[RMDB]
RNA sequence: GGGAACGACUCGAGUAGAGUCGAAAAGGGGCGUUCGCGCCCCCACUGCCGUAGGUUCGCAGCGUGCCUCAGCGAUGAAAUAAUCUUCGAAAGAGGAUUAUGGAGCUGAGGAACUACACGUGAGGAACCUAAACGGAUAUCACGCAUUCGUGCGUAACAAGUCGUUAAACUUCGGUUUAACGACUUGAAAAGAAACAACAACAACAAC
Reactivity to DMS in 0.01 (KOAc 150mM, MgCl2 10mM, bicine 150mM(pH8.5), 24C), signal-to-noise 1, nucleotides 027 to 156: g020g020g140g130c030g070u000u010c250g020c050g010c000c000c000c000c010a000c040u000g010c000c040g020u000a010g030g030u000u000c010g000c040a300g060c010g010u000g010c000c010u010c000a040g000c000g000a160u030g000a090a100a010u000a000a010u000c000u000u000c000g010a110a110a230g000a040g020g010a010u000u010a010u000g000g010a120g010c000u010g000a000g060g000a020a010c030u000a300c000a010c010g040u010g000a300g000g000a020a010c030c000u000a000a060a060c020g020g000a070u010a110u010c020a060c000g040c000a060u000u010c250g060u000g030c020g090u020a090a190
Reactivity to 2A3 in 0.01 (KOAc 150mM, MgCl2 10mM, bicine 150mM(pH8.5), 24C), signal-to-noise 2, nucleotides 027 to 156: g010g010g000g010c060g060u070u080c210g050c000g040c140c020c000c000c010a050c070u060g000c010c000g030u020a000g000g000u000u010c010g000c040a010g000c000g030u000g010c000c000u000c010a000g000c010g210a300u010g000a000a010a010u000a000a000u000c010u000u000c000g010a020a000a000g000a000g000g000a000u000u000a000u000g010g000a000g030c000u000g020a000g000g010a000a000c020u200a010c000a000c010g030u040g000a060g000g010a000a000c010c000u000a000a000a000c000g000g010a010u020a040u120c130a010c020g010c010a020u040u100c150g150u070g030c030g000u060a030a020
Annotation:
Chemical mapping of a 207-nucleotide RNA with DMS and 2A3. The DMS profile rests on 2,024 reads. DMS adducts were read by reverse transcription with MarathonRT. For 2A3 the reverse transcriptase was SuperScript II with manganese.